[RMDB]
RNA sequence: GGGAACGACUCGAGUAGAGUCGAAAAUGCUGGUCUGUGUGCUGGCCCAUCACUUUGGCAAAGAAUUCACCCCACCAGUGCAGGCUGCCUAUCAGAAAGUGGUGGCUGGUGUGGCUAAUGCCCUGGCGCUCACAUGUCUCUUCGGAGACGUGUGAGCAAAAGAAACAACAACAACAAC
Reactivity to 2A3 in 0.01 (KOAc 150mM, MgCl2 10mM, bicine 150mM(pH8.5), 24C), signal-to-noise 8, nucleotides 027 to 126: u130g000c030u040g000g030u050c020u060g130u030g040u090g090c020u020g010g000c000c030c000a050u100c020a020c030u100u080u070g030g000c040a080a090a040g070a110a170u200u090c030a140c000c020c000c010a020c010c010a020g020u060g060c020a010g070g010c030u040g010c010c000u140a170u170c040a060g180a150a170a030g080u070g080g040u030g030g010c010u000g000g030u050g020u040g010g000c030u060a110a050u100g010c000c040c000u010g020g020c060
Reactivity to DMS in 0.01 (KOAc 150mM, MgCl2 10mM, bicine 150mM(pH8.5), 24C), signal-to-noise 3, nucleotides 027 to 126: u010g000c060u000g000g020u030c030u010g000u030g020u020g010c010u000g000g030c060c030c010a040u020c050a060c020u000u000u000g000g020c100a030a080a100g040a080a100u030u040c120a130c030c000c000c040a160c010c030a040g020u020g010c060a010g010g010c050u000g000c030c020u040a090u010c090a090g020a070a080a070g010u000g000g010u000g000g000c050u000g000g000u000g000u010g020g000c030u000a080a110u040g010c010c000c000u010g000g020c300
The data come from the RNA Mapping Database (RMDB), library OK1LIB. This 177-nucleotide RNA was probed chemically with 2A3 and DMS. DMS adducts were read by reverse transcription with MarathonRT. For 2A3, 8,336 sequencing reads were counted. The RNA was probed in 150 mM KOAc, 10 mM MgCl2 and 150 mM bicine (pH 8.5) at 24 C. The DMS profile rests on 6,604 reads.